[RMDB]
RNA sequence: GGGAACGACUCGAGUAGAGUCGAAAAGCAAAAGAUUAUCCAGGUGUAGCGGUGAAAUUCGUAGAGAUCUGGUGGAUAAUCAACCGGUGGCGAAGGCGAAAGAUAACCGCUGAAAAGAAGAAUUGAAAGAAUAGGGGUGAUUCGUCACCCCUAUUCUAAAAGAAACAACAACAACAAC
Reactivity to DMS in 0.01 (KOAc 150mM, MgCl2 10mM, bicine 150mM(pH8.5), 24C), signal-to-noise 1, nucleotides 027 to 126: g040c050a050a100a140a050g020a050u000u000a080u000c060c000a090g000g040u010g000u000a040g000c000g020g000u000g010a020a120a140u000u000c030g010u010a110g020a070g010a110u000c010u010g000g020u020g040g000a110u010a050a080u010c080a090a040c080c000g020g000u000g000g080c300g030a040a110g000g020c040g000a050a000a070g020a050u000a170a020c000c000g050c010u010g000a100a030a110a110g010a050a120g000a070a090u010u030g000a090a100